Description
An RNA of 177 nucleotides, treated with 2A3 and read out base by base. The 2A3 profile rests on 596 reads.

RNA sequence: GGGAACGACUCGAGUAGAGUCGAAAAAUCACCAUCGAGCCGACCAACCGACGGGUGCAGGUACGCGUCAAUGGCGAGGUGGUCGCGGACACGGCCGCGGCGCUGUGCUUGCAGGAAGCCAGUUACCGUCGUUAGCCACUUUCGAGUGGCUAACGACAAAAGAAACAACAACAACAAC
Reactivity to 2A3 in 0.01 (KOAc 150mM, MgCl2 10mM, bicine 150mM(pH8.5), 24C), signal-to-noise 1, nucleotides 027 to 126: a000u030c030a010c000c000a000u050c060g070a020g020c030c000g220a100c110c000a030a020c080c000g180a080c000g000g060g000u080g000c010a010g030g290u200a020c000g030c000g050u080c000a020a240u210g000g050c030g080a080g000g070u040g000g070u000c000g100c090g100g020a020c020a030c030g020g000c010c000g000c020g030g000c000g060c030u180g000u120g010c000u020u040g000c000a060g100g060a000a000g060c010c000a010g000u000u070a060c000c060